[RMDB]
RNA sequence: GGGAACGACUCGAGUAGAGUCGAAAAGCUGGUGACACAUGAGUGCUUGUCCUGGGUCUUCCCUGGGAAGGUCCCACACCACUUCUUGGACCCCAUUUGUGCAGACAAACAGUUGCUGAAGCAAGUGCGCGUUGUAAGGAUUCGUCCUUACAACGCGAAAAGAAACAACAACAACAAC
Reactivity to DMS in 0.01 (KOAc 150mM, MgCl2 10mM, bicine 150mM(pH8.5), 24C), signal-to-noise 2, nucleotides 027 to 126: g000c140u010g000g000u000g000a060c110a100c130a130u020g020a040g010u020g010c040u000u000g000u000c040c080u000g000g010g010u000c140u000u010c080c010c090u000g030g020g010a060a020g000g000u010c030c010c060a090c080a060c100c010a040c060u010u010c050u000u000g000g020a150c030c010c000c030a050u000u000u000g000u000g030c040a070g010a040c070a020a050a150c210a120g000u010u000g020c010u000g000a070a070g000c050a060a060g020u010g010
Reactivity to 2A3 in 0.01 (KOAc 150mM, MgCl2 10mM, bicine 150mM(pH8.5), 24C), signal-to-noise 2, nucleotides 027 to 126: g100c130u010g000g080u070g090a040c040a000c020a140u140g070a040g120u040g040c060u100u120g140u170c010c030u030g000g000g000u020c000u100u150c070c000c050u030g050g020g020a000a090g030g010u070c000c000c000a010c000a020c030c000a020c020u070u020c020u080u020g070g030a070c010c000c000c000a030u030u040u030g070u050g000c080a010g070a080c020a080a110a010c020a100g040u110u130g090c020u080g010a070a030g000c020a020a100g000u050g090
Structure probing data (DMS and 2A3) for a 177-nucleotide construct.
Conditions: 150 mM KOAc, 10 mM MgCl2 and 150 mM bicine (pH 8.5), 24 C.
The data come from the RNA Mapping Database (RMDB), library OK2TST.
Values cover nucleotides 27 to 126.